[RMDB]
The record gives the reactivity of an RNA of 177 nucleotides to 2A3.

RNA sequence: GGGAACGACUCGAGUAGAGUCGAAAACACAACGACCAAACCUGAACUCCACAAAAGAAAUCGCGGCCACAGUCAAACAACGUGAGGGGAGAUCAGGAGGUCGAGUUUGACUGUGGACAAAAACAAACAUGACCAUGGUCUUCGGACCAUGGUCAUGAAAAGAAACAACAACAACAAC
Reactivity to 2A3 in 0.01 (KOAc 150mM, MgCl2 10mM, bicine 150mM(pH8.5), 24C), signal-to-noise 2, nucleotides 027 to 126: c160a030c070a060a090c020g000a030c020c000a300a060a140c000c000u000g000a000a100c010u000c010c100a130c040a040a120a020a000g140a000a190a080u110c130g040c090g240g000c000c000a000c000a000g030u000c010a020a020a020c090a030a030c190g080u050g200a240g000g030g030g000a040g060a100u080c000a000g000g030a020g000g000u000c000g000a000g020u000u000u000g000a000c000u000g000u000g020g010a000c000a000a030a070a050a000c080a000a000a000
2A3 adducts were read by reverse transcription with SuperScript II with manganese. The RNA was probed in 150 mM KOAc, 10 mM MgCl2 and 150 mM bicine (pH 8.5) at 24 C. The data come from the RNA Mapping Database (RMDB), library OK1LIB.